[RMDB]
RNA sequence: GGGAACGACUCGAGUAGAGUCGAAAAAGCCAUACCAUUACGAUGGUAUGGCAAGUCCGUGACGCCGAUGGAUCCCGCCUGGCCGAUGCCGAACUGCCGAUCUGGCUGAUGGUUCCUGCCCCGUCAAAAAACGUAAAGCACUUCGGUGCUUUACGAACGUAUGGCAUAAGUUCGCUUAUGCCAUACGAAAAGAAACAACAACAACAAC
Reactivity to DMS in 0.01 (KOAc 150mM, MgCl2 10mM, bicine 150mM(pH8.5), 24C), signal-to-noise 2, nucleotides 027 to 156: a130g000c000c000a010u010a030c000c000a040u000u010a100c250g040a150u010g000g050u000a000u000g000g010c010a010a000g020u000c020c030g020u030g040a120c070g010c020c050g000a090u000g030g000a090u000c040c000c050g000c020c030u000g020g010c020c010g010a110u020g000c050c030g020a090a060c070u000g010c030c020g010a070u030c030u020g040g000c010u000g020a100u010g030g010u000u020c020c020u000g060c030c010c020c000g030u000c020a020a120a060a040a080a200c020g000u000a000a010a010g020c000a000c000u000u010c300g060g020u000g010c000u000u000u000a000c000g020a040a050
Reactivity to 2A3 in 0.01 (KOAc 150mM, MgCl2 10mM, bicine 150mM(pH8.5), 24C), signal-to-noise 4, nucleotides 027 to 156: a000g010c000c000a000u010a000c010c000a010u030u050a060c260g110a020u010g000g000u010a010u020g000g000c010a000a000g010u000c020c010g020u030g030a030c020g040c050c040g130a070u090g010g020a040u060c010c020c010g030c020c050u040g010g000c000c020g060a070u090g060c020c020g100a140a100c100u100g010c010c010g100a180u050c050u100g020g000c010u010g020a060u080g020g000u010u030c010c000u010g020c000c000c000c000g000u010c000a000a050a050a050a050a010c000g000u010a000a000a000g000c000a000c000u040u100c210g090g000u000g010c000u000u000u000a000c000g000a020a010
Structure probing data (DMS and 2A3) for a 207-nucleotide construct. For 2A3, 4,229 sequencing reads were counted. The RNA was probed in 150 mM KOAc, 10 mM MgCl2 and 150 mM bicine (pH 8.5) at 24 C. DMS adducts were read by reverse transcription with MarathonRT. Source: RMDB library M2RFPK, as collected in RNAgym.